[RMDB]
RNA sequence: GGGAACGACUCGAGUAGAGUCGAAAAUUAAAAGGGAACGACUCGAGUAGAGUCGAAAAGACGCACAACUCAUGGAGCGCAAGACGAAUAGCUACAUAUUCGACAUGAGGGCGCCGUUCGCAAAAAAGACGAUAGAAAGAUUCGUCUUUCUAUCGUCAAAAGAAACAACAACAACAAC
Reactivity to DMS in 0.01 (KOAc 150mM, MgCl2 10mM, bicine 150mM(pH8.5), 24C), signal-to-noise 2, nucleotides 027 to 126: u060u000a080a040a060a120g020g000g000a060a050c010g000a010c000u020c000g000a030g020u000a060g000a000g000u000c000g000a000a030a120a130g030a040c030g020c000a090c100a240a200c010u000c020a000u000g020g010a130g020c090g060c210a080a050g010a200c030g010a020a020u000a020g020c180u020a040c160a070u000a010u000u000c020g010a130c050a010u000g010a030g010g000g030c090g000c030c000g000u000u000c050g010c090a000a060a100a080a020a020
Reactivity to 2A3 in 0.01 (KOAc 150mM, MgCl2 10mM, bicine 150mM(pH8.5), 24C), signal-to-noise 3, nucleotides 027 to 126: u230u070a130a190a150a170g000g010g000a000a000c000g000a000c000u000c010g000a000g010u020a000g000a000g000u000c000g000a000a000a000a000g010a010c010g020c010a050c060a220a090c020u000c020a020u020g010g060a150g140c140g020c140a060a020g080a050c040g010a010a010u020a030g040c090u150a080c060a120u060a030u020u000c010g010a010c010a020u010g000a020g010g030g020c020g000c020c030g020u060u040c130g060c120a080a130a010a020a000a000
Chemical mapping of a 177-nucleotide RNA with DMS and 2A3. The 2A3 profile rests on 5,074 reads. The DMS profile rests on 1,919 reads.